[RMDB]
RNA sequence: GGGAACGACUCGAGUAGAGUCGAAAAGCAGUUCCAGAGUCUGUGGACUCUGAAUACUAGCGGUCAGUCGUCGUCCACAGACGACGUGAAGUGAAUAUGAGAAUGUUCACACUGACGACGUAUUCUCAUAUGUCCUAUCGCUAGGAACUGGAUAGGCAGCCCGUCAAAAUUUCGAUUUUGACGGGCUAAAAGAAACAACAACAACAAC
Reactivity to 2A3 in 0.01 (KOAc 150mM, MgCl2 10mM, bicine 150mM(pH8.5), 24C), signal-to-noise 1, nucleotides 027 to 156: g000c000a000g000u000u000c030c000a000g010a050g010u050c040u160g280u300g200g000a000c000u000c000u000g030a130a020u130a010c010u000a000g090c090g000g000u010c030a030g040u080c030g000u000c000g010u080c120c020a090c070a060g000a000c000g000a000c000g050u060g050a080a120g050u090g090a010a000u000a000u000g010a010g020a080a000u030g050u110u090c060a050c030a070c140u150g070a070c080g040a000c090g110u160a070u040u000c000u000c000a000u000a040u070g290u040c000c010u000a000u070c000g000c000u050a000g000g010a030a030c020u000g010g030a120u040a050g050g100c110